This 177-nucleotide RNA was probed chemically with 2A3. For 2A3, 218 sequencing reads were counted. The reactions ran in a buffer of 150 mM KOAc, 10 mM MgCl2 and 150 mM bicine (pH 8.5), at 24 C. Values are in units of 0.01, from 0 to 300, in steps of 10. Values cover nucleotides 27 to 126. For 2A3 the reverse transcriptase was SuperScript II with manganese.
[RMDB]
RNA sequence: GGGAACGACUCGAGUAGAGUCGAAAACAUAAUAGCUACCUUUUAACAUGCGUUAUCAGGUAUAGAACGUGGCAGACAUCUGCCCCACGACUUCUCUCCAGCUCCUCCUAAACGCGACAGGAUGUAGGCAUCCCGCGUCCUUCGGGACGCGGGAUGCAAAAGAAACAACAACAACAAC
Reactivity to 2A3 in 0.01 (KOAc 150mM, MgCl2 10mM, bicine 150mM(pH8.5), 24C), signal-to-noise 1, nucleotides 027 to 126: c020a090u300a110a130u170a110g090c110u000a020c000c000u000u000u000u000a150a050c090a130u200g130c040g240u040u040a040u020c040a000g000g000u060a040u040a090g070a040a020c110g020u090g070g000c000a000g110a070c000a300u000c000u000g200c000c090c000c000a090c000g090a090c060u150u090c000u060c000u000c000c090a200g070c000u000c000c000u130c000c000u190a290a260a000c020g090c000g000a000c000a040g070g000a040u220g170u190a000g080